[RMDB]
RNA sequence: GGGAACGACUCGAGUAGAGUCGAAAAACUGAUACCUUACGAGGUAUCAGAAUGACUUCGUGGUAGAGCGCCACGAACGGAAAAUAAAGAAAUCUCGAUUGAAACGCACCGUGUACGCACGGUGCGAAAAAGUCGAUCCAGUUCGCUGGAUCGACAAUCUCAUAAAGGACUUCGGUCCUUUAUGAGAAAAAGAAACAACAACAACAAC
Reactivity to 2A3 in 0.01 (KOAc 150mM, MgCl2 10mM, bicine 150mM(pH8.5), 24C), signal-to-noise 1, nucleotides 027 to 156: a000c000u010g000a000u000a000c000c000u030u020a040c220g060a010g000g000u000a000u000c000a000g070a000a060u120g090a080c000u010u000c000g000u000g010g010u060a110g030a030g300c010g000c010c000a000c020g000a000a000c010g000g070a070a000a040a180u200a150a140a050g160a060a130a050u030c040u060c080g240a220u050u190g110a270a110a000c000g020c000a000c000c040g030u000g000u000a040c240g010c020a000c000g010g240u000g030c010g000a000a000a000a000a000g000u000c000g000a000u000c000c000a000g070u110u170c140g030c070u000g030g000a000u020c040g030a000c000a000a000

This 207-nucleotide RNA was probed chemically with 2A3. For 2A3, 478 sequencing reads were counted. The RNA was probed in 150 mM KOAc, 10 mM MgCl2 and 150 mM bicine (pH 8.5) at 24 C. 2A3 adducts were read by reverse transcription with SuperScript II with manganese.